[RMDB]
RNA sequence: GGGAACGACUCGAGUAGAGUCGAAAAGCGCGUAAAUACGGCCGUUAUUCUUUCUUGCCCAACAAAAUGAGGUCGUAGCGUGUGGGGGCAGGGACACCGUCGUUUUGUUCAAGAACGGUUUGUGCGCCGAGGCAAAUUGUUUCGACAAUUUGCCUCGAAAAGAAACAACAACAACAAC
Reactivity to 2A3 in 0.01 (KOAc 150mM, MgCl2 10mM, bicine 150mM(pH8.5), 24C), signal-to-noise 1, nucleotides 027 to 126: g030c010g010c000g000u020a020a030a010u120a060c020g010g000c060c000g050u010u090a140u140u070c010u010u080u050c060u010u070g020c000c010c010a030a060c070a050a120a000a040u120g010a020g000g040u020c020g020u030a000g050c040g020u040g040u050g010g060g000g020g000c010a000g000g030g010a010c020a010c000c000g130u030c010g000u000u000u050u050g030u040u100c020a010a000g000a030a010c000g000g030u000u060u090g020u000g000c010g000c060
Reactivity to DMS in 0.01 (KOAc 150mM, MgCl2 10mM, bicine 150mM(pH8.5), 24C), signal-to-noise 1, nucleotides 027 to 126: g000c060g020c000g010u000a100a070a110u000a040c020g000g000c010c020g010u000u000a090u000u000c060u000u000u000c100u000u000g000c160c020c020a080a060c090a050a050a030a070u000g030a090g020g010u000c030g020u000a060g000c060g010u010g030u000g000g000g000g000g000c060a040g000g000g000a070c060a040c010c050g010u020c010g010u000u000u000u000g010u000u020c160a060a020g000a010a040c030g000g000u000u000u000g030u000g010c090g000c060
The record gives the reactivity of an RNA of 177 nucleotides to 2A3 and DMS. The 2A3 profile rests on 1,423 reads. Reactivities are given for positions 27 through 126. Values are in units of 0.01, from 0 to 300, in steps of 10. In probing experiments dimethyl sulfate is read out at A N1 and C N3, which are open when not base-paired.